[RMDB]
RNA sequence: GGGAACGACUCGAGUAGAGUCGAAAACGUCAGAUGACGAAGUCGGUCCAUCUGCGGUAAAAGACCGACAUAGAGUUCGAAGCAGAACGCACAACCGCAGACACACGAUUGGAGUGUGAAUGAGAGAGCUAGCCGUGGGAUUCGUCCCACGGCUAGCAAAAGAAACAACAACAACAAC
Reactivity to 2A3 in 0.01 (KOAc 150mM, MgCl2 10mM, bicine 150mM(pH8.5), 24C), signal-to-noise 1, nucleotides 027 to 126: c000g000u000c000a000g150a300u120g150a070c100g000a030a050g000u000c000g000g000u000c000c000a000u070c100u000g000c000g000g070u020a000a050a000a000g050a000c000c000g000a000c000a000u000a000g100a000g000u040u000c000g050a300a110g240c030a050g080a150a110c000g000c050a000c000a000a230c000c000g000c000a000g020a000c000a000c000a000c000g200a250u300u300g110g000a250g100u000g000u000g070a000a080u300g000a080g100a100g000a000
Background
The data come from the RNA Mapping Database (RMDB), library OK1LIB. An RNA of 177 nucleotides, treated with 2A3 and read out base by base. Reactivities are given for positions 27 through 126.